[RMDB]
RNA sequence: GGGAACGACUCGAGUAGAGUCGAAAAGAUAUGGAGGCAGGGGAGCUUUAUAAUCGGAAACGAUUAUUAAGCAUCGAUCCGAAGCCUCCUAAGUCAAAACGUGGUUCCUGUUCGCAGGAACCACGAAGAAGUACAAAAUGUUCGCAUUUUGUACUUCAAAAGAAACAACAACAACAAC
Reactivity to 2A3 in 0.01 (KOAc 150mM, MgCl2 10mM, bicine 150mM(pH8.5), 24C), signal-to-noise 3, nucleotides 027 to 126: g000a000u010a010u030g010g000a010g020g000c010a010g010g010g010g020a010g000c000u010u010u010a010u000a010a010u000c010g010g000a010a020a000c010g000a000u000u010a000u020u100a010a010g000c000a020u300c010g010a000u010c010c010g130a140a010g010c000c000u000c000c000u000a000a000g000u000c010a000a020a060a130c020g010u000g000g000u010u000c000c000u020g030u050u080c300g000c060a010g000g010a000a010c010c000a000c000g000a000a010
Reactivity to DMS in 0.01 (KOAc 150mM, MgCl2 10mM, bicine 150mM(pH8.5), 24C), signal-to-noise 4, nucleotides 027 to 126: g010a020u000a060u010g000g000a010g020g050c000a200g010g010g000g000a000g020c000u000u000u000a010u000a010a010u000c000g020g010a020a010a030c000g010a010u000u000a010u000u000a010a010g010c000a300u000c220g000a020u000c000c000g010a200a160g000c000c000u000c000c010u000a000a100g000u000c000a120a060a090a130c020g020u000g000g000u000u000c000c000u000g000u010u010c230g020c020a010g000g000a010a000c020c000a000c000g010a020a050
An RNA of 177 nucleotides, treated with 2A3 and DMS and read out base by base. The data come from the RNA Mapping Database (RMDB), library TTRDEL. The DMS profile rests on 4,955 reads. The RNA was probed in 150 mM KOAc, 10 mM MgCl2 and 150 mM bicine (pH 8.5) at 24 C.